Chemical mapping of a 177-nucleotide RNA with 2A3 and DMS.
[RMDB]
RNA sequence: GGGAACGACUCGAGUAGAGUCGAAAAUUAAAGGUGUGAAGGUACAAGCGACAGUGUCCAACUGAGGUAAUCGACCACUGCCAGUACCAAGACGUGCGUAGUCAACUCAAAGGCAGAACGCAAAAAAUCUUUUAGAGAUGUUCGCAUCUCUAAAAGAAAAAGAAACAACAACAACAAC
Reactivity to 2A3 in 0.01 (KOAc 150mM, MgCl2 10mM, bicine 150mM(pH8.5), 24C), signal-to-noise 1, nucleotides 027 to 126: u140u110a140a040a030g090g000u070g040u020g100a150a050g040g010u010a010c000a130a000g060c060g080a060c030a020g020u030g010u050c050c020a070a040c130u080g080a050g070g080u160a070a110u100c060g000a010c000c060a010c010u010g000c050c000a000g000u000a010c000c000a010a030g070a010c080g030u080g020c020g000u040a010g050u020c020a010a030c020u070c000a040a030a040g020g000c010a040g060a150a010c000g000c000a060a070a000a000a000a060
Reactivity to DMS in 0.01 (KOAc 150mM, MgCl2 10mM, bicine 150mM(pH8.5), 24C), signal-to-noise 3, nucleotides 027 to 126: u000u000a080a090a080g000g000u000g040u010g010a100a130g000g010u010a030c060a070a130g010c050g000a050c010a010g010u000g010u000c060c090a070a080c120u010g000a070g040g010u000a080a080u010c070g000a110c210c020a030c020u010g020c000c010a100g010u000a040c020c040a040a160g000a050c100g030u010g020c030g030u000a110g000u000c020a020a080c060u020c070a060a080a110g000g010c030a050g000a050a040c020g000c010a000a010a080a070a090a060
The data come from the RNA Mapping Database (RMDB), library M2PK90. The reactions ran in a buffer of 150 mM KOAc, 10 mM MgCl2 and 150 mM bicine (pH 8.5), at 24 C. The DMS profile rests on 1,754 reads. For 2A3, 1,429 sequencing reads were counted.